[RMDB]
RNA sequence: GGGAACGACUCGAGUAGAGUCGAAAAACAAUCUUCGGAUUGUUAUGACCGUAGGUCAAGAACUACAAUACUAGACCGUUGAAAGUUAAUUCGAAAGAGUUAACUGGAGGUCUAGAAUAUUGCUUGACCUAAACGGCCUUACGUCCUUCGGGACGAAUAAUAGGUUUUCAUUCGUGAAAACCUAUUAAAAAGAAACAACAACAACAAC
Reactivity to 2A3 in 0.01 (KOAc 150mM, MgCl2 10mM, bicine 150mM(pH8.5), 24C), signal-to-noise 5, nucleotides 027 to 156: a000c000a000a000u010c010u050u070c240g130g020a010u010u000g020u040u060a170u220g080a060c000c010g010u010a010g000g000u000c000a010a010g010a090a040c120u250a060c230a000a010u020a030c000u000a010g000a010c010c020g110u110u020g010a000a000a000g000u000u000a000a000u010u010c000g030a060a060a040g000a060g010u000u000a000a000c010u010g000g040a010g000g000u000c000u010a000g000a070a080u040a010u010u020g010c000u000u000g000a000c000c000u000a020a040a000c000g010g000c000c010u050u090a050c010g000u000c000c000u000u090c190g080g000g000a000c000g000a010a010
Reactivity to DMS in 0.01 (KOAc 150mM, MgCl2 10mM, bicine 150mM(pH8.5), 24C), signal-to-noise 4, nucleotides 027 to 156: a010c000a010a020u000c010u000u010c300g050g000a040u000u010g010u000u010a060u000g010a040c010c000g070u000a050g020g020u000c000a040a080g010a100a190c120u000a210c020a020a070u010a150c030u000a020g000a020c000c000g030u010u010g000a210a170a070g000u000u000a000a010u000u000c010g020a160a100a260g000a030g010u010u000a010a000c010u010g040g020a130g030g010u000c000u000a010g010a060a070u000a010u000u010g000c000u010u000g000a030c000c000u010a010a030a080c010g020g020c000c010u010u000a100c030g000u000c010c010u000u000c300g060g010g010a020c020g010a060a080